[RMDB]
RNA sequence: GGGAACGACUCGAGUAGAGUCGAAAAUGGUGUUAAGUGGAAUAAGUGGAAAAAUAUACAUAUAUGUACAGGGGGCUACAUAUAUGUAUAUGCCCCCUCGUGGCAGUAUAAGUAGGUAUAAGGUGGACGAUAUGAUUACUUUCGAGUAAUCAUAUCGAAAAGAAACAACAACAACAAC
Reactivity to 2A3 in 0.01 (KOAc 150mM, MgCl2 10mM, bicine 150mM(pH8.5), 24C), signal-to-noise 5, nucleotides 027 to 126: u090g030g010u050g020u130u100a110a060g050u090g080g060a090a070u120a170a030g020u100g030g090a060a030a030a060a010u050a010u000a030c010a010u030a000u000a000u020g010u020a020c050a050g000g030g020g000g000c010u010a000c030a000u080a000u040a020u060g010u010a000u000a000u010g000c000c000c000c000c000u010c010g020u030g020g000c020a010g040u030a040u020a140a040g050u050a020g070g040u070a120u040a100a040g050g020u060g020g020a030
Reactivity to DMS in 0.01 (KOAc 150mM, MgCl2 10mM, bicine 150mM(pH8.5), 24C), signal-to-noise 5, nucleotides 027 to 126: u010g000g020u010g000u010u010a060a100g020u010g010g010a090a070u030a060a080g010u020g010g000a020a050a060a110a040u010a030u010a010c020a020u010a010u000a020u000g000u000a030c050a060g000g000g000g010g010c090u010a030c050a030u020a040u020a040u010g000u000a020u010a020u010g000c050c020c010c020c010u000c040g020u010g000g010c010a050g000u010a030u000a040a110g030u020a030g010g000u020a040u010a040a070g000g020u000g010g000a240
Chemical mapping of a 177-nucleotide RNA with 2A3 and DMS.
2A3 adducts were read by reverse transcription with SuperScript II with manganese.
Values cover nucleotides 27 to 126.
Source: RMDB library OK1LIB, as collected in RNAgym.